[RMDB]
RNA sequence: GGGAACGACUCGAGUAGAGUCGAAAAUGGUCACAGUUUAUAUCUAGCAGACAAUUUGACUGCUGAUGAAACAAAGGCGCUUAAAGAGUUAUAUGGCCCCGUUGAUCCUACUUUCUUACACAGAUUCCGCCCAUGGUCUUCGGACCAUGGAAAAGAAACAACAACAACAAC
Reactivity to DMS in 0.01 (KOAc 150mM, MgCl2 10mM, bicine 150mM(pH8.5), 24C), signal-to-noise 5, nucleotides 027 to 129: u000g000g000u000c050a090c050a150g000u000u000u000a150u020a070u040c020u080a040g030c020a040g030a200c070a120a220u030u040u040g050a130c010u010g010c010u040g020a070u000g000a010a000a000c020a050a110a080g000g000c120g020c110u010u010a060a050a070g020a080g030u040u020a100u020a110u050g020g020c030c010c020c030g030u000u000g010a080u000c000c000u000a120c100u010u000u010c040u000u000a060c170a010c060a100g020a180u000u000c060c000g000c210
Reactivity to 2A3 in 0.01 (KOAc 150mM, MgCl2 10mM, bicine 150mM(pH8.5), 24C), signal-to-noise 9, nucleotides 027 to 129: u140g020g000u020c000a040c040a030g010u030u030u000a300u020a030u050c130u150a000g000c020a000g100a200c050a200a220u110u140u300g090a100c010u000g010c000u010g000a010u020g010a040a000a010c020a010a150a010g030g010c050g000c060u030u040a050a090a000g160a020g040u240u050a140u090a050u240g040g010c000c000c000c000g030u040u020g020a110u030c010c010u020a080c010u050u090u020c010u040u090a040c110a020c000a050g030a200u020u000c030c010g020c040
About this RNA: An RNA of 170 nucleotides, treated with DMS and 2A3 and read out base by base. Conditions: 150 mM KOAc, 10 mM MgCl2 and 150 mM bicine (pH 8.5), 24 C. For 2A3, 14,907 sequencing reads were counted. Source: RMDB library 15KLIB, as collected in RNAgym. Values cover nucleotides 27 to 129. 2A3 adducts were read by reverse transcription with SuperScript II with manganese.